The data come from the RNA Mapping Database (RMDB), library M2RFPK. This 207-nucleotide RNA was probed chemically with 2A3. Reactivities are given for positions 27 through 156. The 2A3 profile rests on 748 reads. The RNA was probed in 150 mM KOAc, 10 mM MgCl2 and 150 mM bicine (pH 8.5) at 24 C. For 2A3 the reverse transcriptase was SuperScript II with manganese. Values are in units of 0.01, from 0 to 300, in steps of 10.
[RMDB]
RNA sequence: GGGAACGACUCGAGUAGAGUCGAAAAUAGCGAAGUAGGAUUUUAUGCGUCAAGUGUUCACAGGCUGGGGAGUCGCCGUGAAACGAAAAGCAGAAAGCGUGCUGAUUACGAUAUAAUUUCCGCACCCAUAAGAAGUCUCUGUUCGCAGAGACUUCAAUCUACGUUUCAGCUUCGGCUGAAACGUAGAAAAAGAAACAACAACAACAAC
Reactivity to 2A3 in 0.01 (KOAc 150mM, MgCl2 10mM, bicine 150mM(pH8.5), 24C), signal-to-noise 1, nucleotides 027 to 156: u150a000g060c070g020a120a010g040u070a060g050g080a030u060u030u030u030a030u050g040c030g010u060c060a020a060g040u030g010u180u020c020a010c080a110g000g000c010u080g030g020g010g020a090g020u070c000g040c040c000g020u010g030a030a040a000c020g030a010a000a070a070g000c020a020g100a140a120a000g070c080g010u020g040c000u000g010a040u020u030a000c010g030a020u010a020u000a160a060u000u000u000c040c010g000c010a030c000c010c010a040u060a130a110g000a000a000g000u010c000u000c000u000g070u060u020c190g030c080a000g000a000g000a000c000u000u000c000a000a000